[RMDB]
RNA sequence: GGGAACGACUCGAGUAGAGUCGAAAACACAAUCUCCAGAGCCUCAUAGUUGUCGUCGGGGUUCACACUCUUGGGCGUAAACACCUUGUUCCACAGGUCUCGUCUCCCCACUAUGACGGGGAUGUACCAGGUGACAUACCUUCGGGUAUGUCACCUGAAAAGAAACAACAACAACAAC
Reactivity to DMS in 0.01 (KOAc 150mM, MgCl2 10mM, bicine 150mM(pH8.5), 24C), signal-to-noise 1, nucleotides 027 to 126: c090a120c300a170a110u010c050u010c020c060a080g000a200g020c070c020u000c060a050u000a120g020u010u000g000u030c150g030u010c010g030g000g000g020u000u000c090a110c090a030c000u000c090u020u000g040g000g020c080g020u000a030a080a090c170a130c030c030u000u010g000u000u020c030c140a030c090a100g000g020u000c000u000c060g030u010c040u000c030c050c000c060a140c070u000a100u000g060a090c210g020g030g030g020a030u010g010u000a050c120